Annotation:
This 177-nucleotide RNA was probed chemically with DMS. It was measured as part of the RMDB library OK2TRN. Conditions: 150 mM KOAc, 10 mM MgCl2 and 150 mM bicine (pH 8.5), 24 C.

RNA sequence: GGGAACGACUCGAGUAGAGUCGAAAAAAAAUAUGCCGUUGGAUCAGCUUGCAUUGGAGGUGGCCAAGGUAUUGCUGUCAUCAUUCAGAGCACAGCCUGAAGAGACCAGUGAGCUCACUGUGACCCAUCCUUAGGCGGAAUUCGUUCCGCCUAAGGAAAAAGAAACAACAACAACAAC
Reactivity to DMS in 0.01 (KOAc 150mM, MgCl2 10mM, bicine 150mM(pH8.5), 24C), signal-to-noise 1, nucleotides 027 to 126: a100a070a030a120u000a000u000g010c030c000g010u010u000g000g010a100u000c030a040g000c040u010u040g000c050a070u000u010g040g020a070g030g040u000g050g000c030c020a040a030g010g010u010a040u010u010g050c030u010g030u030c080a130u000c070a120u010u010c040a020g010a150g000c040a070c280a080g000c080c060u010g000a060a020g000a140g010a070c130c040a040g010u000g000a180g000c100u020c030a000c050u010g000u040g010a170c030c010c000a130